[RMDB]
RNA sequence: GGGAACGACUCGAGUAGAGUCGAAAACGACCACGAUCCACUACACCGAGGGCGCCGAUGUUGGUUACCGCUGGUUUGCCAGCACAAAUCAGACCCCGAUGUUCGCGUUCGGUCACGGCUUGUCCUACUUCGUCCACGACUUCGGUCGUGGACGAAGAAAAGAAACAACAACAACAAC
Reactivity to 2A3 in 0.01 (KOAc 150mM, MgCl2 10mM, bicine 150mM(pH8.5), 24C), signal-to-noise 1, nucleotides 027 to 126: c090g070a010c000c010a040c030g020a100u010c020c000a010c000u060a070c110a020c040c030g080a050g010g030g010c030g000c000c010g000a100u090g050u140u010g000g030u100u130a070c020c030g010c000u000g000g000u050u060u100g080c000c000a090g000c090a010c040a020a060a040u080c000a000g080a060c010c000c020c030g050a050u070g130u030u120c110g000c010g050u050u000c030g090g000u070c020a000c020g020g000c040u090u100g020u020c000c000u000a000

The data come from the RNA Mapping Database (RMDB), library OK1LIB. Structure probing data (2A3) for a 177-nucleotide construct. The reactions ran in a buffer of 150 mM KOAc, 10 mM MgCl2 and 150 mM bicine (pH 8.5), at 24 C. For 2A3, 738 sequencing reads were counted.